[RMDB]
RNA sequence: GGGAACGACUCGAGUAGAGUCGAAAAUGGAUUUAAUUAUGUAGGACCAAAACAUUCCUCAGUAAAUUAGCUUGCUAAAUAUUGUUACUUUUGUGAUUCUGCCUUUGAGAAACAGCUUAAUUACUGACAAACAAGGUUUGUUCGCAAACCUUGUUUGAAAAGAAACAACAACAACAAC
Reactivity to 2A3 in 0.01 (KOAc 150mM, MgCl2 10mM, bicine 150mM(pH8.5), 24C), signal-to-noise 2, nucleotides 027 to 126: u060g020g010a060u080u050u210a130a210u210u240a080u300g110u100a120g060g000a030c010c000a000a030a050a050c080a070u030u000c000c000u000c010a010g010u040a000a060a100u030u010a000g050c010u000u060g030c030u040a060a110a070u210a090u190u100g060u060u050a050c000u160u210u090u110g060u010g020a020u040u090c020u060g000c000c000u070u060u110g100a120g000a030a070a010c010a000g000c010u000u000a000a000u000u000a000c000u010g030a030
Reactivity to DMS in 0.01 (KOAc 150mM, MgCl2 10mM, bicine 150mM(pH8.5), 24C), signal-to-noise 2, nucleotides 027 to 126: u010g030g000a180u000u000u020a100a100u010u020a110u010g000u010a080g020g010a090c040c030a050a080a100a070c120a220u000u000c000c040u000c050a030g000u000a030a020a110u020u000a050g010c010u000u000g030c030u000a040a070a110u000a060u010u010g020u000u000a060c080u000u000u000u020g010u010g010a050u000u010c040u010g000c060c040u000u000u000g020a120g010a110a050a060c080a040g000c020u000u000a050a040u000u000a020c050u010g010a230